[RMDB]
RNA sequence: GGGAACGACUCGAGUAGAGUCGAAAAGGGCCAUGUACCUAUCCAAAAUGAGAUCCCAUCUUGCACACUGUGCUAAAUUGAGAUUCUCAUGCCUCCUACUUGGAGAGAUCUGGACUAGAAGUCAGGGAAUAGGUCGUUUCUUUCGAGAAACGACCAAUCGUCUUGUACCGUUCGCGGUACAAGACGAAAAAGAAACAACAACAACAAC
Reactivity to 2A3 in 0.01 (KOAc 150mM, MgCl2 10mM, bicine 150mM(pH8.5), 24C), signal-to-noise 1, nucleotides 027 to 156: g060g000g020c030c010a090u090g040u160a000c020c000u030a090u030c010c030a030a010a000a080u040g000a000g010a010u010c000c000c000a010u050c080u020u000g010c000a000c030a040c080u260g000u070g000c040u080a000a000a150u040u090g040a060g040a080u300u030c040u000c030a040u040g050c000c050u030c050c050u200a300c070u100u300g030g000a000g000a060g020a080u100c070u090g030g000a010c030u030a100g070a120a060g080u090c090a040g000g000g060a090a220u120a140g000g000u010c020g000u000u000u000c000u020u070u060c160g130a000g000a000a000a020c000g000a000c000c000a000a000
Source: RMDB library M2RFPK, as collected in RNAgym. This 207-nucleotide RNA was probed chemically with 2A3. Conditions: 150 mM KOAc, 10 mM MgCl2 and 150 mM bicine (pH 8.5), 24 C.